[RMDB]
RNA sequence: GGGAACGACUCGAGUAGAGUCGAAAACUUCACUGAAAACGCAUCUAUUGAUCAAAAGAGGAGUGUCGGGAAUUUCAUUUAAGCCUAGCCUUUAGGGGACAAUUGGAAUGCUAUACACUAAAGCUGGAUUCUUAUAAAUCUUCGGAUUUAUAAGAAUAAAAGAAACAACAACAACAAC
Reactivity to 2A3 in 0.01 (KOAc 150mM, MgCl2 10mM, bicine 150mM(pH8.5), 24C), signal-to-noise 2, nucleotides 027 to 126: c010u090u070c010a040c070u070g040a050a060a110a010c040g050c000a030u020c030u140a130u070u130g060a060u110c040a030a100a110a020g060a050g080g000a020g000u030g000u040c040g080g030g040a040a030u060u090u070c010a000u040u070u110a040a010g020c000c000u010a030g030c050c000u200u240u110a050g010g010g000g040a020c030a020a120u090u060g000g050a040a000u040g010c020u080a040u060a180c030a010c070u070a090a020a010g040c000u010g030g080
Reactivity to DMS in 0.01 (KOAc 150mM, MgCl2 10mM, bicine 150mM(pH8.5), 24C), signal-to-noise 5, nucleotides 027 to 126: c070u010u000c060a080c080u010g000a090a050a070a100c120g010c040a040u000c030u010a090u000u010g000a070u010c060a070a070a090a120g000a090g010g010a030g030u000g010u010c080g010g010g010a090a040u000u010u000c030a040u010u000u000a050a300g000c020c020u000a050g010c150c140u010u000u000a030g010g000g010g020a170c160a030a060u000u000g010g000a030a030u000g000c020u000a070u000a060c070a030c080u000a030a060a120g010c080u000g010g000
The data come from the RNA Mapping Database (RMDB), library OK2TRN. Chemical mapping of a 177-nucleotide RNA with 2A3 and DMS. 2A3 adducts were read by reverse transcription with SuperScript II with manganese. The DMS profile rests on 3,928 reads. Conditions: 150 mM KOAc, 10 mM MgCl2 and 150 mM bicine (pH 8.5), 24 C. Values cover nucleotides 27 to 126.